[RMDB]
RNA sequence: GGGAACGACUCGAGUAGAGUCGAAAACAAGCCCUGGAAACGGGGUCUAAUACCGGAUAUGAGCCUCCGAGGCAUCUCGGGGGCUGGAAAGCUCCGGCGGUGAAGGAUGAGCCCGCGGCCUAUCAGCACAUUGCCUCAUGUUCGCAUGAGGCAAUGUAAAAGAAACAACAACAACAAC
Reactivity to DMS in 0.01 (KOAc 150mM, MgCl2 10mM, bicine 150mM(pH8.5), 24C), signal-to-noise 1, nucleotides 027 to 126: c060a140a260g000c000c000c000u000g000g010a100a160a160c050g030g000g000g020u000c100u010a060a040u000a060c040c000g020g000a040u000a200u000g010a070g000c000c010u010c000c000g030a030g010g030c300a160u010c010u000c000g010g000g010g000g010c000u000g000g000a060a080a120g000c130u000c000c010g030g010c080g030g000u000g010a080a020g010g020a050u000g000a110g010c030c010c050g030c040g020g000c030c010u000a040u010c060a090g040c230
This 177-nucleotide RNA was probed chemically with DMS. Values are in units of 0.01, from 0 to 300, in steps of 10. The data come from the RNA Mapping Database (RMDB), library OK2TRN. For DMS, 964 sequencing reads were counted. The reactions ran in a buffer of 150 mM KOAc, 10 mM MgCl2 and 150 mM bicine (pH 8.5), at 24 C.